[RMDB]
RNA sequence: GGGAACGACUCGAGUAGAGUCGAAAAGACUGUGCUCUCACUGUUCACCCAGCACUAGCAGUACCAGACGGUUCUGUGGAGUCCUGGGGAAUGGAGAGAGCACAGUCAAAACCUCACUUCGGUGAGGCGUGCAAAAUAUCUUCGGAUAUUUUGCACGAAAAGAAACAACAACAACAAC
Reactivity to 2A3 in 0.01 (KOAc 150mM, MgCl2 10mM, bicine 150mM(pH8.5), 24C), signal-to-noise 1, nucleotides 027 to 126: g010a000c000u000g020u000g000c000u000c000u000c000a040c030u000g010u020u010c040a300c130c000c000a010g030c030a000c000u000a010g010c000a010g020u050a010c010c000a100g150a300c140g090g000u010u050c000u000g030u060g050g210a020g000u000c010c000u000g000g020g020g000a000a010u030g030g000a000g010a000g000a010g000c000a000c000a000g000u000c000a000a020a000a000c000c000u000c000a000c020u030u040c150g050g000u000g000a000g000g040
Reactivity to DMS in 0.01 (KOAc 150mM, MgCl2 10mM, bicine 150mM(pH8.5), 24C), signal-to-noise 2, nucleotides 027 to 126: g020a010c000u000g000u000g000c000u000c010u000c000a110c000u000g020u010u010c000a190c000c010c000a020g030c300a010c000u010a300g000c000a030g000u010a020c000c000a220g010a110c300g020g030u000u010c000u000g010u010g000g030a040g010u000c300c000u000g010g010g010g010a000a010u010g000g000a060g000a010g010a000g000c000a000c000a000g020u010c000a000a040a070a160c000c000u000c000a010c000u000u050c170g000g000u000g000a000g010g000